[RMDB]
RNA sequence: GGGAACGACUCGAGUAGAGUCGAAAAGAUAUGGAGGAUACGGUCUAUAAUCUGCAGGAAACGGGGGGUUAUAUUCGGAAACGAAUAUAACCCCCUCUCGCCUGCAGGUAGACCGUCCUCCUAAGUCGUUAUACACUAUGUUCGCAUAGUGUAUAACAAAAGAAACAACAACAACAAC
Reactivity to 2A3 in 0.01 (KOAc 150mM, MgCl2 10mM, bicine 150mM(pH8.5), 24C), signal-to-noise 2, nucleotides 027 to 126: g090a030u140a090u260g000g010a000g000g010a090u120a300c010g000g000u000c000u000a090u050a210a300u170c000u040g000c000a010g000g020a080a090a120c170g020g000g000g000g000g060u000u020a000u000a000u000u020c020g060g000a060a080a070c000g010a010a020u000a000u000a000a000c000c000c000c010c000u010c000u000c000g030c000c000u010g000c000a000g010g000u000a000g000a000c000c000g000u010c000c000u010c000c000u010a010a010g000u010c020
Reactivity to DMS in 0.01 (KOAc 150mM, MgCl2 10mM, bicine 150mM(pH8.5), 24C), signal-to-noise 6, nucleotides 027 to 126: g010a090u010a300u000g010g010a030g000g010a190u010a030c040g010g000u010c000u000a090u010a300a140u020c000u010g010c010a020g000g010a070a090a140c300g000g000g010g010g010g010u000u000a010u000a000u000u000c000g000g000a100a100a290c000g000a010a010u000a000u000a010a000c000c000c000c000c000u000c020u000c300g000c010c000u000g010c000a010g010g010u000a010g000a010c000c010g000u000c000c000u000c000c000u000a010a080g000u010c120

The data come from the RNA Mapping Database (RMDB), library TTRINS. Structure probing data (2A3 and DMS) for a 177-nucleotide construct. The RNA was probed in 150 mM KOAc, 10 mM MgCl2 and 150 mM bicine (pH 8.5) at 24 C. Reactivities are given for positions 27 through 126. DMS adducts were read by reverse transcription with MarathonRT.